[RMDB]
RNA sequence: GGGAACGACUCGAGUAGAGUCGAAAACAACCGUGUGUAUGUAUUUGAUGCCAAAUUCCACGGCUUGGCAGGACUGAUAAAGGCAACAUCAGAUGAAAGUUCUCUUUGAGGAUAUUUCCAUUUCUUUCCUUUUUUUGCUUCUCUUAAAUUCAUCAGAUGAUAAAUCACCUUUCGAGGUGAUUUAUCAAAAAGAAACAACAACAACAAC
Reactivity to 2A3 in 0.01 (KOAc 150mM, MgCl2 10mM, bicine 150mM(pH8.5), 24C), signal-to-noise 2, nucleotides 027 to 156: c040a010a050c030c030g010u000g020u000g000u020a070u100g050u010a120u050u120u110g120a070u100g040c010c020a050a040a050u120u030c040c020a020c010g000g020c020u020u020g010g000c000a010g030g010a000c020u020g010a020u060a050a100a030g030g000c020a030a020c020a040u040c000a010g020a050u050g040a030a040a050g020u070u000c010u000c010u040u110u160g020a020g040g000a010u020a190u090u070u000c040c010a050u030u080u000c040u020u050u040c010c000u040u030u050u040u020u080u150g050c020u110u010c000u000c000u090u160a090a130a210u260u150c000a030u150c030a030g120a160
Reactivity to DMS in 0.01 (KOAc 150mM, MgCl2 10mM, bicine 150mM(pH8.5), 24C), signal-to-noise 1, nucleotides 027 to 156: c040a050a140c040c090g010u020g010u010g000u010a060u020g020u000a070u000u000u000g030a090u000g020c040c030a290a140a290u000u010c010c010a080c050g010g000c040u010u000g020g060c030a100g000g010a100c090u020g010a120u000a030a060a050g000g000c070a070a080c030a080u000c040a090g000a070u000g000a040a050a120g020u000u010c020u000c010u000u000u000g000a050g020g010a080u000a050u000u010u000c000c000a130u010u000u000c000u000u010u010c010c000u000u000u000u000u000u000u000g010c010u000u020c000u000c020u010u000a040a040a110u010u000c040a080u010c070a120g010a210